[RMDB]
RNA sequence: GGGAACGACUCGAGUAGAGUCGAAAAUUUUAGCCCUUAACCAUGCACCAGCAACUAAUGCCAGAAAGGCUUACAGGUGCAAUCAGACACUUAUCCGGCUAAGUCUAGAUUGAAAAUGCUUUGAAAAUACGUGUAGAUCAUUCGUGAUCUACACGUAAAAAGAAACAACAACAACAAC
Reactivity to DMS in 0.01 (KOAc 150mM, MgCl2 10mM, bicine 150mM(pH8.5), 24C), signal-to-noise 4, nucleotides 027 to 126: u000u010u020u010a120g020c000c000c070u010u020a060a130c170c090a160u010g020c000a000c010c010a150g020c110a090a120c240u000a040a050u010g020c020c020a160g020a080a150a180g000g010c010u000u000a030c110a080g010g000u010g020c010a020a030u010c080a080g040a100c120a080c110u010u020a100u000c070c070g000g020c040u000a060a080g000u010c040u000a060g000a050u010u000g000a060a020a060a120u000g010c060u010u010u000g010a080a090a110a120
Reactivity to 2A3 in 0.01 (KOAc 150mM, MgCl2 10mM, bicine 150mM(pH8.5), 24C), signal-to-noise 3, nucleotides 027 to 126: u100u080u030u080a040g010c000c000c000u020u090a080a040c040c030a130u090g000c030a030c020c000a000g060c020a090a080c050u150a060a040u110g010c010c000a070g240a300a170a010g060g010c010u050u060a070c060a080g040g000u020g000c010a010a000u030c020a020g030a040c000a030c090u090u080a040u090c040c050g020g030c060u040a040a020g000u030c030u050a090g040a170u060u110g010a060a060a050a050u070g000c030u090u040u170g150a130a130a000a000
Structure probing data (DMS and 2A3) for a 177-nucleotide construct. For 2A3, 1,951 sequencing reads were counted. The RNA was probed in 150 mM KOAc, 10 mM MgCl2 and 150 mM bicine (pH 8.5) at 24 C. For DMS, 2,326 sequencing reads were counted.